[RMDB]
RNA sequence: GGGAACGACUCGAGUAGAGUCGAAAAGAUAUGGAUACGGUAAUUCCGACUGGACGCAGCUCGGAAACGAGCUGAACUACGUCCAAUCGGUGCCAGUAUCCUAAGUCAAACCCUCGUUCGCGAGGGACGUAACGUUUGAGUUCGCUCAAACGUUACGAAAAGAAACAACAACAACAAC
Reactivity to 2A3 in 0.01 (KOAc 150mM, MgCl2 10mM, bicine 150mM(pH8.5), 24C), signal-to-noise 2, nucleotides 027 to 126: g030a010u060a010u160g010g000a000u000a000c000g010g000u120a290a300u300u100c010c000g000a020c030u010g010g000a000c000g010c030a020g010c020u000c020g050g000a050a060a040c030g000a000g000c000u000g010a020a010c060u210a050c030g000u000c000c000a000a010u010c000g000g000u000g000c010c060a010g010u000a000u000c000c000u000a100a010g040u000c020a080a040a300c000c030c000u000c010g080u110u020c300g010c030g170a010g020g010g030a070
Reactivity to DMS in 0.01 (KOAc 150mM, MgCl2 10mM, bicine 150mM(pH8.5), 24C), signal-to-noise 2, nucleotides 027 to 126: g000a060u000a300u000g020g010a000u000a000c000g000g000u010a070a170u030u000c010c020g030a020c040u000g020g010a030c030g000c000a000g000c010u000c000g010g010a080a070a190c010g000a030g000c000u000g000a050a090c090u000a300c030g000u000c000c000a000a010u010c000g000g030u000g010c000c000a100g030u000a000u000c000c000u010a030a120g000u010c080a110a110a110c010c000c000u000c010g020u000u000c250g010c000g020a000g000g030g020a050